[RMDB]
RNA sequence: GGGAACGACUCGAGUAGAGUCGAAAAAAACUCGCUAUAAAGCAAAAGCAUAAACGGUUGAGGAUCGUUGACGAAAAAAUUGGUCGCGUAUAUGGGUGUGUUUGGUUGAAUGUACGGUCUCUUGUCAAACUCUAUUAUGUCGACGCUGUCGCGCAUACAGACAUAGCAUGUUCGCAUGCUAUGUCUGAAAAGAAACAACAACAACAAC
Reactivity to DMS in 0.01 (KOAc 150mM, MgCl2 10mM, bicine 150mM(pH8.5), 24C), signal-to-noise 1, nucleotides 027 to 156: a030a010a030c020u010c050g000c050u010a130u000a110a060a110g020c050a110a080a020a150g010c050a130u000a070a070a040c040g010g050u000u010g020a070g000g010a030u000c040g010u000u000g000a110c050g030a000a060a050a140a060a110u000u020g020g000u000c040g000c020g030u000a030u000a060u000g010g000g010u000g040u010g040u000u000u000g050g050u000u000g000a090a060u000g020u000a050c060g010g000u000c020u000c030u000u040g000u010c070a070a050a050c020u000c030u000a120u000u000a110u000g010u010c020g010a130c120g000c020u000g000u000c040g040c010g020c030a100u000a120
Reactivity to 2A3 in 0.01 (KOAc 150mM, MgCl2 10mM, bicine 150mM(pH8.5), 24C), signal-to-noise 3, nucleotides 027 to 156: a000a000a010c080u040c050g000c030u090a050u120a170a130a000g000c040a030a050a100a020g050c010a050u090a040a050a000c040g040g010u050u050g030a060g070g000a030u050c020g020u010u110g020a030c030g150a020a010a030a050a070a030u050u130g040g000u030c010g000c000g080u030a030u010a060u120g080g020g020u040g000u020g000u040u050u090g020g050u040u070g030a120a030u100g020u050a030c020g010g030u050c040u020c000u120u110g030u040c040a080a040a050c040u020c020u050a070u110u010a030u110g050u070c010g020a010c020g080c300u100g030u040c030g010c000g010c020a000u070a150

The data come from the RNA Mapping Database (RMDB), library OK3TST. The record gives the reactivity of an RNA of 207 nucleotides to DMS and 2A3. The reactions ran in a buffer of 150 mM KOAc, 10 mM MgCl2 and 150 mM bicine (pH 8.5), at 24 C. The DMS profile rests on 2,871 reads. 2A3 adducts were read by reverse transcription with SuperScript II with manganese. 2A3 is a SHAPE reagent: it acylates the 2'-hydroxyl of flexible nucleotides of all four kinds. For 2A3, 1,265 sequencing reads were counted.